[RMDB]
RNA sequence: GGGAACGACUCGAGUAGAGUCGAAAACACUGGAACGCCCAUCUGUGUCGUUACAGCGGCUUUCGGCCUCAGUGGUAGUGAGUGGUAAAGUUUCACUGGAACACAGCGCCCAUCUGUGUCGUUACGGAGUACCUGACAGAUUCGUCUGUCAGGUACUAAAAGAAACAACAACAACAAC
Reactivity to 2A3 in 0.01 (KOAc 150mM, MgCl2 10mM, bicine 150mM(pH8.5), 24C), signal-to-noise 3, nucleotides 027 to 126: c030a000c010u030g010g050a040a000c000g030c000c020c040a090u110c110u140g130u060g000u060c000g020u020u040a010c020a070g000c040g110g000c000u040u010u080c020g020g000c000c000u050c030a060g000u100g110g000u060a090g020u030g110a040g030u040g020g060u150a080a050a050g020u050u170u160c070a040c040u080g040g040a050a010c010a000c000a030g050c000g030c000c000c010a050u040c040u100g000u020g010u020c010g020u040u060a040c070g060g040
Reactivity to DMS in 0.01 (KOAc 150mM, MgCl2 10mM, bicine 150mM(pH8.5), 24C), signal-to-noise 6, nucleotides 027 to 126: c050a110c020u000g010g010a010a040c040g010c070c020c040a190u010c160u010g020u010g030u000c020g020u000u000a040c030a030g010c060g010g010c130u000u000u000c030g010g000c030c020u010c050a120g010u010g010g010u010a060g020u000g010a090g010u010g010g010u010a060a090a070g000u000u000u010c110a060c050u000g000g000a110a090c020a020c030a160g010c040g000c020c020c000a080u000c030u000g020u000g000u000c040g010u000u010a080c070g020g000
This 177-nucleotide RNA was probed chemically with 2A3 and DMS. Source: RMDB library OK2TRN, as collected in RNAgym. The DMS profile rests on 8,794 reads. For 2A3, 3,652 sequencing reads were counted. Conditions: 150 mM KOAc, 10 mM MgCl2 and 150 mM bicine (pH 8.5), 24 C.